Source: RMDB library OK2TRN, as collected in RNAgym. An RNA of 177 nucleotides, treated with 2A3 and DMS and read out base by base. Reactivities are given for positions 27 through 126. The DMS profile rests on 2,193 reads. 2A3 adducts were read by reverse transcription with SuperScript II with manganese.

[RMDB]
RNA sequence: GGGAACGACUCGAGUAGAGUCGAAAAAGGAUUGGCAGAGGAUAGGUAAAAACAUUCUUGUUCGUGCAAACAAUGAACUAGGUGAUGUGUCACUGAAGGUUAACAUUGUCCUGGUGCCUCUCAAGGACCAGCUAAAACAGUUCGCUGUUUUAGCUGGAAAAGAAACAACAACAACAAC
Reactivity to 2A3 in 0.01 (KOAc 150mM, MgCl2 10mM, bicine 150mM(pH8.5), 24C), signal-to-noise 2, nucleotides 027 to 126: a000g130g000a040u050u050g010g000c000a030g010a000g030g000a010u020a090g050g060u090a080a080a000a010a020c010a040u040u090c010u070u040g020u030u010c020g020u020g120c080a050a140a090c010a050a110u110g010a020a000c020u000a030g020g050u060g050a030u060g090u080g070u140c030a010c020u100g050a090a070g100g010u020u070a070a030c010a040u090u090g040u030c010c000u070g080g150u040g030c020c010u000c010u010c030a030a060g050g000a040
Reactivity to DMS in 0.01 (KOAc 150mM, MgCl2 10mM, bicine 150mM(pH8.5), 24C), signal-to-noise 2, nucleotides 027 to 126: a080g010g010a050u010u020g030g010c030a030g000a050g000g000a030u000a050g010g030u000a040a070a060a040a030c070a110u010u010c060u000u000g020u000u010c070g000u000g030c230a070a080a110c170a060a040u000g000a020a030c020u010a110g000g010u000g010a040u000g010u010g010u000c030a020c020u000g000a040a070g000g020u000u000a050a050c070a030u000u000g010u000c000c020u000g000g000u010g010c010c000u010c060u010c080a070a080g020g000a180